[RMDB]
RNA sequence: GGGAACGACUCGAGUAGAGUCGAAAAUGAUGGAUGGAAGUUUCGCAUGAUACCGUCGGUCCAGUUCUCCUGCGUCGAUGGCGUGUCCGUUCUGAGCCUACAGUCGACAACGGCAUCUCCCUGACGGGAGGUGGUCGUAGUUGAUGAUUAAUCCGGGGUUCAAUUUUAUGUUCGCAUAAAAUUGAACAAAAGAAACAACAACAACAAC
Reactivity to DMS in 0.01 (KOAc 150mM, MgCl2 10mM, bicine 150mM(pH8.5), 24C), signal-to-noise 2, nucleotides 027 to 156: u010g020a150u000g000g010a080u000g000g000a100a120g010u000u000u010c050g020c040a170u000g000a160u000a060c030c020g030u000c050g030g030u010c070c010a070g010u000u020c130u000c110c040u000g000c150g020u000c020g010a080u000g010g020c020g030u010g010u000c000c020g000u010u000c040u000g010a150g000c020c020u020a070c050a170g010u010c000g010a050c020a120a070c010g000g000c020a000u010c000u000c020c000c020u010g040a190c300g020g020g030a000g030g040u000g000g020u000c000g000u000a080g020u000u010g010a040u010g010a210u000u010a080a150u000c040c020g010g000g010
Reactivity to 2A3 in 0.01 (KOAc 150mM, MgCl2 10mM, bicine 150mM(pH8.5), 24C), signal-to-noise 4, nucleotides 027 to 156: u160g040a040u090g010g040a030u040g010g080a090a080g030u000u050u080c040g000c040a030u070g040a090u140a150c010c010g020u010c000g010g020u090c040c000a030g020u130u080c110u080c100c000u020g010c070g010u010c010g030a030u050g000g000c030g010u020g020u000c020c010g000u050u030c030u040g040a040g040c000c030u070a090c060a060g020u010c010g000a010c010a040a010c000g010g020c000a000u010c000u010c000c010c020u060g140a060c150g010g000g000a000g000g010u030g020g120u090c000g000u010a030g000u000u010g000a010u010g000a020u050u160a070a040u030c070c020g020g000g040